[RMDB]
RNA sequence: GGGAACGACUCGAGUAGAGUCGAAAAGCGCUCCUGAACGUGACUUCAGAAGACGGGCGCCGACAAGUUAGAUUGUCAAGCCGACAGUGUAGUGACACUGGGUAAUCUAACUUACCAAUCGGCGGCGCGUUGAGUCACGUCAACAACCGUCGAGCGAGAUACUCAGCGCGUUCGCGCGCUGAGUAUCAAAAGAAACAACAACAACAAC
Reactivity to 2A3 in 0.01 (KOAc 150mM, MgCl2 10mM, bicine 150mM(pH8.5), 24C), signal-to-noise 2, nucleotides 027 to 156: g080c010g000c000u020c040c020u050g010a070a000c010g020u010g000a000c010u210u070c220a240g030a250a050g060a170c060g070g040g040c020g000c000c000g000a010c010a060a000g030u000u020a000g010a000u000u110g080u130c060a020a030g130c050c050g130a120c010a020g000u000g010u090a300g120u180g240a010c000a000c000u010g000g000g050u060a000a000u020c000u020a000a000c030u000u030a040c000c070a060a070u000c000g010g050c000g060g040c180g000c000g080u040u020g000a020g000u000c000a000c000g050u020c000a020a020c010a050a040c080c010g170u250c040g000a000g000c000g000a060